[RMDB]
About this RNA:
An RNA of 177 nucleotides, treated with DMS and 2A3 and read out base by base. The DMS profile rests on 1,066 reads. Conditions: 150 mM KOAc, 10 mM MgCl2 and 150 mM bicine (pH 8.5), 24 C.
RNA sequence: GGGAACGACUCGAGUAGAGUCGAAAACGCACACGGUGGCUGGGGCAGCGUUGCACUUCCGCCUUUCGUUAUCACUCUAGCUGAGAAGGAAGACGCCCGCGAUGACGAAUAGUGCCAGAGCCAUGAGCGGAUUACCACCUUUCGAGGUGGUAAUCCGAAAAGAAACAACAACAACAAC
Reactivity to DMS in 0.01 (KOAc 150mM, MgCl2 10mM, bicine 150mM(pH8.5), 24C), signal-to-noise 1, nucleotides 027 to 126: c090g000c170a140c040a090c030g010g020u000g000g040c000u010g010g000g010g000c000a080g000c000g000u050u010g010c060a180c070u020u000c100c030g020c010c000u010u000u000c000g000u010u000a020u000c020a060c040u040c260u000a180g010c060u020g000a020g000a240a220g000g000a190a000g020a070c230g000c170c000c000g060c010g010a140u050g000a020c000g010a020a220u030a160g000u000g000c000c020a070g010a300g000c020c000a000u030g050a170g010
Reactivity to 2A3 in 0.01 (KOAc 150mM, MgCl2 10mM, bicine 150mM(pH8.5), 24C), signal-to-noise 2, nucleotides 027 to 126: c020g000c020a020c010a000c110g050g020u010g090g070c050u070g010g040g030g000c010a050g060c010g050u090u060g010c060a060c090u080u000c010c000g040c030c000u010u030u010c060g040u050u030a080u120c010a030c020u030c080u070a060g010c100u090g040a020g010a200a030g030g050a000a100g060a030c100g030c000c040c000g010c040g000a050u130g030a000c040g000a120a100u040a080g090u040g030c000c020a030g000a000g000c000c060a040u030g060a030g100